Structure probing data (2A3) for a 207-nucleotide construct.
[RMDB]
RNA sequence: GGGAACGACUCGAGUAGAGUCGAAAACGGUGAUGCGUAUCAGGCUGGCACACAGAAGGCUAACUCAGAACUGUCAAGCCUGUCUCCGGUUUAUGCUGAACAGCGACCGAUUGCUGCAAUACUCUACAGUGAGCCUUAUCUUAAUCGCCUGCAACUGCCUUCUCUGGAACUUCGGUUCCAGAGAAGGAAAAGAAACAACAACAACAAC
Reactivity to 2A3 in 0.01 (KOAc 150mM, MgCl2 10mM, bicine 150mM(pH8.5), 24C), signal-to-noise 2, nucleotides 027 to 156: c030g010g040u010g050a100u100g010c010g000u140a080u090c020a000g020g000c010u000g040g050c010a000c000a000c000a010g130a140a010g060g040c060u070a080a010c010u020c160a020g040a090a040c030u010g020u070c010a080a020g030c020c020u080g000u030c020u020c040c010g000g030u060u060u050a110u240g040c020u050g060a070a050c030a040g010c020g000a000c030c000g010a040u060u160g020c030u000g020c010a030a070u080a190c030u080c010u050a050c020a000g050u020g100a000g040c010c000u070u070a070u040c070u020u160a110a100u060c080g000c040c000u080g070c010a080a030c020u050g030
Conditions: 150 mM KOAc, 10 mM MgCl2 and 150 mM bicine (pH 8.5), 24 C. Source: RMDB library OK3TST, as collected in RNAgym.